Source: RMDB libraries RFM100 and RFMREP, as collected in RNAgym. This 177-nucleotide RNA was probed chemically with 2A3 and DMS. The RNA was probed in 150 mM KOAc, 10 mM MgCl2 and 150 mM bicine (pH 8.5) at 24 C. 2A3 adducts were read by reverse transcription with SuperScript II with manganese.
[RMDB]
RNA sequence: GGGAACGACUCGAGUAGAGUCGAAAACGCUGAAAAGCACCCCACGAAGGGAGGUGCAAUAGGGCGUGAAAUCAGUUGGCGAUCGAACGACGGGGCAUACAAGGUCCUCUACACAAUGACCGUAGCGGCCAAUCUAUCUUUUCGAAGAUAGAUUGGCAAAAGAAACAACAACAACAAC
Reactivity to 2A3 in 0.01 (KOAc 150mM, MgCl2 10mM, bicine 150mM(pH8.5), 24C), signal-to-noise 4, nucleotides 027 to 126: c000g020c000u040g010a050a000a020a000g000c000a000c000c000c010c000a050c150g180a140a170g110g020g040a160g000g010u010g000c010a010a090u140a130g060g030g040c000g000u030g030a020a040a070u100c070a030g050u070u060g100g000c020g010a050u020c040g040a030a050c020g060a040c020g050g000g010g020c030a020u090a120c050a080a060g060g010u040c000c010u030c020u050a000c020a000c010a050a160u120g040a020c030c020g020u010a030g070c050g040
Reactivity to DMS in 0.01 (KOAc 150mM, MgCl2 10mM, bicine 150mM(pH8.5), 24C), signal-to-noise 5, nucleotides 027 to 126: c030g040c000u000g000a080a130a180a170g050c000a020c000c010c020c010a170c190g040a150a190g000g010g000a080g010g010u010g000c020a040a080u020a140g000g010g000c020g000u010g000a060a060a050u050c060a090g000u000u010g000g010c060g010a050u000c030g000a060a110c100g000a070c120g000g010g000g000c050a070u040a090c160a120a140g000g010u000c010c010u020c050u010a090c110a070c120a040a080u020g000a070c050c000g020u010a080g020c150g010